Source: RMDB library OK3TST, as collected in RNAgym.
An RNA of 207 nucleotides, treated with 2A3 and read out base by base.
For 2A3, 673 sequencing reads were counted.
For 2A3 the reverse transcriptase was SuperScript II with manganese.
The reactions ran in a buffer of 150 mM KOAc, 10 mM MgCl2 and 150 mM bicine (pH 8.5), at 24 C.
[RMDB]
RNA sequence: GGGAACGACUCGAGUAGAGUCGAAAAGGUUAUUCUGGUUCUUUGUCAAGUAAUCACGAUAUGUAUUGUAGUAUACAUAAAGGCGCUCAUGUUGCGUCCUCAGAUGCUAUAAUGACUCGGUGUUUAGCCGUUUAUGAUUGCUUUUGCAAUAAUAUAACUCAGAAGUUUGUUUCGACAAACUUCUGAGAAAAGAAACAACAACAACAAC
Reactivity to 2A3 in 0.01 (KOAc 150mM, MgCl2 10mM, bicine 150mM(pH8.5), 24C), signal-to-noise 2, nucleotides 027 to 156: g070g000u070u040a040u160u040c060u100g090g000u080u030c060u050u040u050g100u150c020a010a010g000u040a070a000u030c010a000c080g040a080u120a030u180g030u030a020u000u010g010u010a000g030u000a010u030a070c050a030u060a080a140a020g010g000c010g000c020u060c120a230u300g180u240u040g070c000g030u060c040c000u040c050a050g010a080u000g000c000u020a020u010a060a030u040g060a070c030u010c050g000g000u010g050u130u180u180a020g000c000c010g010u010u020u130a120u060g020a010u000u000g000c000u000u080u080u190g010c010a010a010u050a080a090u150a030u100a080a080